[RMDB]
RNA sequence: GGGAACGACUCGAGUAGAGUCGAAAAUUGAGGUCCUUCGUCGAGGUGGUCAGCAGCGUAUUGGGCAUCGUUCCGCCGACGUUGUUGACAACGAUGUCUAGUCUUCCGAACGCCUCGACGGCCUGCCUGAUGGGUGCGGGUUCGCCCGCACCCAUCAAAAAGAAACAACAACAACAAC
Reactivity to 2A3 in 0.01 (KOAc 150mM, MgCl2 10mM, bicine 150mM(pH8.5), 24C), signal-to-noise 1, nucleotides 027 to 126: u090u130g020a000g060g050u130c160c130u230u030c050g000u000c000g000a000g020g030u110g010g020u000c000a000g010c000a000g000c000g040u280a120u230u300g040g000g000c040a000u000c080g040u010u020c210c000g000c060c000g060a000c070g130u120u180g000u000u000g110a000c010a000a000c010g000a000u010g030u050c000u070a100g000u130c000u130u090c080c040g060a080a000c000g000c000c000u000c000g040a000c060g000g000c000c000u000g000c070c000
Chemical mapping of a 177-nucleotide RNA with 2A3. The RNA was probed in 150 mM KOAc, 10 mM MgCl2 and 150 mM bicine (pH 8.5) at 24 C.